RNA sequence: GGGAACGACUCGAGUAGAGUCGAAAAUAAUAUGGAGGUAAUGAUGGUAUCUACCUUCACAGGUUGUUACAAGGAUUAAAUAAGCUAAUAGAUAUAAGGUGUUUAGAAGAGUGUCUGGUUCAGGCUGGGCAUGGUGGCUCACGCCUGUAAUCCCAGCCCACAUGUAGCAGUUCGCUGCUACAUGUGGAAAAGAAACAACAACAACAAC
Reactivity to 2A3 in 0.01 (KOAc 150mM, MgCl2 10mM, bicine 150mM(pH8.5), 24C), signal-to-noise 2, nucleotides 027 to 156: u120a000a030u100a030u160g010g030a040g000g040u040a110a090u170g080a010u060g130g070u060a060u050c020u060a040c010c000u020u010c000a010c010a020g080g010u020u010g000u020u040a000c000a030a020g040g000a080u130u070a050a080a040u090a030a030g010c020u020a040a080u070a250g010a030u090a050u030a160a100g040g000u030g040u060u150u050a070g010a050a010g050a000g050u080g020u150c030u000g010g000u010u010c000a050g030g010c010u010g000g000g030c030a060u190g150g020u040g150g010c000u000c000a000c070g000c000c000u000g000u040a030a000u010c000c000c000a010g010c000